Structure probing data (2A3) for a 207-nucleotide construct. 2A3 adducts were read by reverse transcription with SuperScript II with manganese. It was measured as part of the RMDB library OK3TST. Reactivities are given for positions 27 through 156.
RNA sequence: GGGAACGACUCGAGUAGAGUCGAAAAUGUUUAUAAUUUAUCUAAAUUCAGUUAUUUGCUAAUAAUGCAGUAAUACCUAUUUGAGCAAGAAAUUCCAGGUCGAUUACUUUGAUUACUAGGUAAAUUACAUUGUAUCUCUAUUAAUGGGACCACUGCACCAUACGAAAGGGUUCGCCCUUUCGUAUGGAAAAGAAACAACAACAACAAC
Reactivity to 2A3 in 0.01 (KOAc 150mM, MgCl2 10mM, bicine 150mM(pH8.5), 24C), signal-to-noise 1, nucleotides 027 to 156: u020g000u000u190u190a280u090a160a040u040u000u010a000u050c020u060a000a200a160u220u140c040a000g150u000u150a110u110u150u120g000c020u080a140a110u040a300a020u280g000c040a000g020u060a060a020u130a260c040c000u030a030u080u000u170g000a000g040c080a080a060g000a140a290a060u290u070c020c050a020g000g040u000c020g110a000u090u000a000c000u060u090u110g060a000u020u070a060c040u000a000g010g000u020a040a040a020u020u000a000c020a040u010u010g070u020a170u000c000u030c020u020a080u210u220a110a180u230g040g000g000a040c010c110a090c040u150g000c030a030